[RMDB]
RNA sequence: GGGAACGACUCGAGUAGAGUCGAAAAUCUAGAACAAGCCAUUAAGAGCAAACAGAUUGACAGUCGGCACACCAUUCAAUUCACUAGGCUUGUCCAGCCUGGGUUUAAGUUCGAGUUAACGUAUGAGGACUCAUAAUCGGUUCGCCGAUUAUGAGUCAAAAGAAACAACAACAACAAC
Reactivity to DMS in 0.01 (KOAc 150mM, MgCl2 10mM, bicine 150mM(pH8.5), 24C), signal-to-noise 3, nucleotides 027 to 126: u010c020u000a110g000a110a100c100a060a120g010c010c030a090u010u010a090a080g020a110g020c060a080a080a060c080a040g000a060u000u010g000a050c120a080g010u010c050g000g010c010a040c040a080c060c040a060u000u000c080a100a070u000u000c100a120c050u000a030g010g010c020u000u000g000u000c200c080a120g010c000c000u000g020g000g000u000u010u010a040a080g010u000u000c040g000a140g010u010u010a080a060c090g010u010a070u010g010a160g000
Record summary
Conditions: 150 mM KOAc, 10 mM MgCl2 and 150 mM bicine (pH 8.5), 24 C. This 177-nucleotide RNA was probed chemically with DMS. DMS adducts were read by reverse transcription with MarathonRT. It was measured as part of the RMDB library OK2TRN. For DMS, 1,991 sequencing reads were counted. Reactivities are given for positions 27 through 126.